Structure probing data (DMS and 2A3) for a 177-nucleotide construct.
Source: RMDB library OK1LIB, as collected in RNAgym.
2A3 adducts were read by reverse transcription with SuperScript II with manganese.
The DMS profile rests on 29,343 reads.
Reactivities are given for positions 27 through 126.
[RMDB]
RNA sequence: GGGAACGACUCGAGUAGAGUCGAAAACUGCGUACUAGAGAUGUUGAAGACUGAGCCGGUUUACAGUAUCUUACGCAUACACCACUUGUAGACUAGACCGUAUUAGUCUUGGAACAUAAGUAGUGCAGGAACUCUGAGAAUUCGUUCUUGGAGUUCCAAAAGAAACAACAACAACAAC
Reactivity to DMS in 0.01 (KOAc 150mM, MgCl2 10mM, bicine 150mM(pH8.5), 24C), signal-to-noise 8, nucleotides 027 to 126: c020u010g000c110g000u000a020c050u010a060g000a150g010a020u000g010u010u010g010a030a020g000a010c000u000g000a040g000c060c010g000g000u000u000u000a050c170a060g020u010a050u020c060u020u020a060c150g000c190a110u020a080c110a080c180c070a080c110u000u010g010u010a040g000a090c130u000a050g000a030c010c020g000u000a030u010u010a010g000u000c000u000u000g010g020a020a040c010a010u000a010a060g010u000a010g000u000g010c020a160
Reactivity to 2A3 in 0.01 (KOAc 150mM, MgCl2 10mM, bicine 150mM(pH8.5), 24C), signal-to-noise 9, nucleotides 027 to 126: c010u020g000c020g020u010a010c000u010a010g010a010g010a070u010g010u000u010g050a010a000g000a000c000u000g000a000g030c020c010g000g020u010u010u030a040c030a020g010u030a070u010c020u070u070a020c060g010c020a020u070a030c080a030c020c030a050c050u040u090g030u020a010g010a020c010u010a010g010a010c000c000g010u020a040u010u030a010g000u000c000u000u000g050g090a010a000c000a000u010a020a020g030u010a000g010u000g010c010a010